[RMDB]
RNA sequence: GGGAACGACUCGAGUAGAGUCGAAAAUCUGGCACCAGUUCAACGUCGCCAAGGAUCCGGACCUACUCGCCAAGAUCGCGACGUACUUCGACGGUGUCGACGCGACUGAGCCGACAGACCUGAUCCGACCUUUUAGGCGUUUCGACGCCUAAAAGGUAAAAGAAACAACAACAACAAC
Reactivity to 2A3 in 0.01 (KOAc 150mM, MgCl2 10mM, bicine 150mM(pH8.5), 24C), signal-to-noise 1, nucleotides 027 to 126: u030c000u000g020g030c010a040c070c000a100g120u140u030c100a100a100c040g020u000c020g020c000c050a060a050g090g010a030u050c080c000g020g050a090c020c020u030a050c010u010c010g020c030c010a070a030g030a240u060c080g010c000g000a020c000g000u020a040c020u040u110c060g230a140c110g070g070u010g070u010c000g000a000c020g030c000g050a040c040u030g000a010g010c080c090g010a010c010a070g050a050c010c000u000g040a010u000c030c020g070
Reactivity to DMS in 0.01 (KOAc 150mM, MgCl2 10mM, bicine 150mM(pH8.5), 24C), signal-to-noise 1, nucleotides 027 to 126: u000c050u000g000g020c040a010c020c090a160g000u020u000c080a120a100c040g000u010c030g000c030c270a080a090g030g010a040u000c030c080g010g000a070c100c010u010a060c170u000c010g000c100c070a090a090g010a110u000c090g030c020g000a070c050g020u000a060c050u000u020c110g030a100c180g000g000u000g000u020c030g000a100c070g010c010g000a030c010u030g020a180g060c040c030g020a040c140a030g000a090c040c000u000g010a090u000c030c010g010